Chemical mapping of a 207-nucleotide RNA with 2A3. The RNA was probed in 150 mM KOAc, 10 mM MgCl2 and 150 mM bicine (pH 8.5) at 24 C. Source: RMDB library OK3TST, as collected in RNAgym. Reactivities are rounded to 0.1 and cut off at 0 and 3.

[RMDB]
RNA sequence: GGGAACGACUCGAGUAGAGUCGAAAAAAGAGAACUUCAGUUUACAAAGUGGGAACCGAUUAUUAUCACCUAUUGGGUACUAAUAAGAAUGGACGUGAAACGUGGGCAAAAGUGAAACGUGACGGUAACUCAAAUAAGUACAGCCUGAACAUAACCACCACGUUUCCUAUUUCGAUAGGAAACGUGGAAAAGAAACAACAACAACAAC
Reactivity to 2A3 in 0.01 (KOAc 150mM, MgCl2 10mM, bicine 150mM(pH8.5), 24C), signal-to-noise 1, nucleotides 027 to 156: a010a030g160a010g000a090a000c050u170u000c000a140g040u030u030u070a090c090a000a110a090g020u060g000g000g010a030a030c000c050g000a120u010u010a000u070u000a050u130c020a020c000c030u180a250u160u160g030g000g000u070a020c030u010a000a130u020a040a000g020a060a070u080g010g090a000c030g000u000g030a010a040a040c020g010u150g020g000g000c020a000a010a080a100g030u080g020a220a090a000c060g020u060g040a000c010g000g000u040a020a020c000u070c040a000a080a080u120a230a000g010u010a000c000a030g050c010c000u020g000a000a000c020a030u140a000a010c000c020a000